Conditions: 150 mM KOAc, 10 mM MgCl2 and 150 mM bicine (pH 8.5), 24 C. This 177-nucleotide RNA was probed chemically with DMS and 2A3. In probing experiments dimethyl sulfate is read out at A N1 and C N3, which are open when not base-paired. 2A3 adducts were read by reverse transcription with SuperScript II with manganese. Values are in units of 0.01, from 0 to 300, in steps of 10.
RNA sequence: GGGAACGACUCGAGUAGAGUCGAAAACUGGCCGAUCGAUCAGUACCAGGUACACUGGCCAGCGAUCAGAGGCGCGUACGCAUCGCACGAUCUCAGUGCGCAGCUGCGCUGAUCUCGAUAUGGUACGGUGUCCACAUCCUUUCGAGGAUGUGGACACAAAAGAAACAACAACAACAAC
Reactivity to DMS in 0.01 (KOAc 150mM, MgCl2 10mM, bicine 150mM(pH8.5), 24C), signal-to-noise 2, nucleotides 027 to 126: c000u000g020g010c010c000g020a110u010c200g020a090u020c020a090g090u000a080c020c020a030g020g070u000a130c130a080c090u000g000g000c040c020a030g050c070g000a080u000c110a150g010a110g000g020c050g000c000g030u000a010c170g000c000a060u000c010g000c060a010c030g010a150u020c210u000c190a120g000u000g020c000g010c190a030g010c050u000g010c030g020c010u000g020a010u000c000u010c010g000a100u000a070u020g000g000u000a020c030g010
Reactivity to 2A3 in 0.01 (KOAc 150mM, MgCl2 10mM, bicine 150mM(pH8.5), 24C), signal-to-noise 2, nucleotides 027 to 126: c000u010g000g010c020c010g040a190u130c090g020a040u060c100a050g060u020a040c020c020a020g110g020u060a080c080a020c110u100g010g000c000c000a020g050c070g040a070u090c050a010g020a010g070g010c000g000c010g030u020a020c150g030c000a100u070c000g020c000a000c020g080a110u060c150u070c260a060g010u010g020c000g010c050a000g050c020u000g000c020g000c000u100g080a220u000c010u000c020g040a070u050a070u150g060g040u020a110c040g000